An RNA of 177 nucleotides, treated with DMS and 2A3 and read out base by base. The reactions ran in a buffer of 150 mM KOAc, 10 mM MgCl2 and 150 mM bicine (pH 8.5), at 24 C. The data come from the RNA Mapping Database (RMDB), library OK2TST. The DMS profile rests on 2,457 reads. 2A3 adducts were read by reverse transcription with SuperScript II with manganese. The 2A3 profile rests on 1,812 reads.

RNA sequence: GGGAACGACUCGAGUAGAGUCGAAAAGGCGUGUUCGGUGCCGGCAACAAGGAUGCCCUUGAUGGUGCGAUAGCUCGGGUCGCCGACCUCGAUGGCGCGGGCGCAGGCGGCCUCCAGCCGGUCGCAGCAUGACGAGGGGAUUCGUCCCCUCGUCAUGAAAAGAAACAACAACAACAAC
Reactivity to DMS in 0.01 (KOAc 150mM, MgCl2 10mM, bicine 150mM(pH8.5), 24C), signal-to-noise 2, nucleotides 027 to 126: g010g010c070g030u010g010u000u010c050g000g000u000g010c030c010g030g020c040a070a150c130a090a150g000g020a120u010g020c040c000c030u000u000g000a120u010g000g000u000g030c030g020a030u010a160g000c010u000c230g000g000g030u000c020g030c000c000g010a170c190c010u000c050g000a070u010g010g020c100g010c050g010g000g000c040g000c070a160g000g010c000g020g010c000c000u000c050c160a000g000c000c070g020g000u010c010g020c020a120g010
Reactivity to 2A3 in 0.01 (KOAc 150mM, MgCl2 10mM, bicine 150mM(pH8.5), 24C), signal-to-noise 2, nucleotides 027 to 126: g060g010c070g000u050g020u120u040c060g040g050u090g040c050c030g030g040c050a100a070c010a100a110g070g030a140u210g040c020c030c020u060u030g120a150u090g060g170u050g030c010g020a060u030a010g010c000u000c020g000g010g000u040c000g000c020c000g040a050c020c000u020c010g080a090u110g140g070c070g000c050g100g030g000c080g000c090a060g030g010c020g000g000c000c020u030c030c010a030g000c020c020g100g020u010c000g000c010a050g000